[RMDB]
RNA sequence: GGGAACGACUCGAGUAGAGUCGAAAACGACUUUGAUAGUCAUGAUAGGAAGUCCUGAGAACAUCUUGAUCAGGUGAACAAUCUGGAAGAAGACAGAUUUCACAUUUACACUUCUGUGGGCAUUCAAGGUGCCUCAGCUUGGGGAUGCCAGGCAACAACGAGCAGUGCAGUUCGCUGCACUGCUCGUAAAAGAAACAACAACAACAAC
Reactivity to 2A3 in 0.01 (KOAc 150mM, MgCl2 10mM, bicine 150mM(pH8.5), 24C), signal-to-noise 2, nucleotides 027 to 156: c040g020a000c010u000u030u220g160a130u220a110g050u040c040a100u100g050a030u080a090g200g000a020a020g010u040c000c000u100g030a060g040a030a020c020a020u000c040u040u060g030a030u070c000a030g180g000u000g010a000a010c060a080a060u000c020u010g080g090a220a080g030a050a000g060a130c000a010g000a000u000u060u080c070a040c000a000u150u230u230a090c040a000c040u110u120c030u080g070u090g000g050g000c030a010u020u080c160a190a110g020g000u080g000c020c010u020c000a000g010c010u030u030g010g010g030g050a010u090g060c000c020a000g000g000c010a020a030c010a010
An RNA of 207 nucleotides, treated with 2A3 and read out base by base. The data come from the RNA Mapping Database (RMDB), library OK3TST. For 2A3 the reverse transcriptase was SuperScript II with manganese. For 2A3, 656 sequencing reads were counted. The RNA was probed in 150 mM KOAc, 10 mM MgCl2 and 150 mM bicine (pH 8.5) at 24 C.